[RMDB]
RNA sequence: GGGAACGACUCGAGUAGAGUCGAAAACAUCCUUUUCUUACCUUGUGGCCGGCAUGGCCCCAGCCUCCUCGCUGGCGCCGGCUGGGCAACGAUCCGAGGGAACUAUUCCUCUCGAGAAUCGGCAAAUAACCCUCAUCCUUCGGGAUGAGGAAAAGAAACAACAACAACAAC
Reactivity to DMS in 0.01 (KOAc 150mM, MgCl2 10mM, bicine 150mM(pH8.5), 24C), signal-to-noise 3, nucleotides 027 to 129: c300a040u030c030c020u090u020u030u050c040u030u050a180c160c000u030u030g080u010g040g030c000c020g000g070c000a080u060g010g060c030c060c010c010a000g020c000c130u060c090c110u050c180g020c030u000g070g000c290g030c000c030g040g060c020u000g000g050g090c040a160a040c000g060a070u150c000c030g000a060g050g000g020a040a190c210u060a180u100u030c070c010u070c030u030c000g030a000g020a120a070u000c000g000g050c000a040a100a090u050a150a040c210
Reactivity to 2A3 in 0.01 (KOAc 150mM, MgCl2 10mM, bicine 150mM(pH8.5), 24C), signal-to-noise 6, nucleotides 027 to 129: c060a140u100c010c000u050u080u100u060c030u080u140a150c050c030u080u090g050u100g190g030c000c000g000g000c040a210u150g060g000c020c020c000c000a000g010c000c070u150c020c030u140c120g000c020u020g000g000c000g000c000c000g010g000c000u000g010g020g030c020a040a060c000g010a010u000c010c000g010a010g030g000g000a000a020c030u110a190u180u050c010c040u100c000u010c020g100a130g030a110a110u010c000g000g020c010a040a010a040u090a040a060c000